Annotation:
An RNA of 207 nucleotides, treated with DMS and read out base by base. For DMS the reverse transcriptase was MarathonRT.
[RMDB]
RNA sequence: GGGAACGACUCGAGUAGAGUCGAAAAGGAACCGGAUGUCAUCACGUUGUUGCAGUACCAGAUGGCAUCUUAAAUCCGAUCUGCCAAUAAGCAUGUAGAAAGCUGAUGUGGGCUUUAGCUGGACGGGGGAAUACAGGCAACUUCGGUUGCCUGUAAACCCCUCAAUUCCUUUCGAGGAAUUGAGGGGAAAAGAAACAACAACAACAAC
Reactivity to DMS in 0.01 (KOAc 150mM, MgCl2 10mM, bicine 150mM(pH8.5), 24C), signal-to-noise 1, nucleotides 027 to 156: g060g000a110a060c120c170g020g000a010u000g020u010c020a070u000c000a250c240g030u000u000g000u000u000g000c000a100g000u000a120c010c020a130g000a010u010g020g010c010a000u010c020u020u020a040a060a070u000c020c040g020a010u000c030u000g030c000c020a060a170u000a080a120g000c030a080u010g040u000a140g010a050a060a070g040c030u000g020a090u020g010u010g010g000g000c030u000u000u000a040g020c080u010g000g010a070c070g020g010g020g010g010a080a260u000a010c000a020g050g010c010a050a020c030u040u040c300g050g030u000u000g030c000c000u010g010u000a000a020a120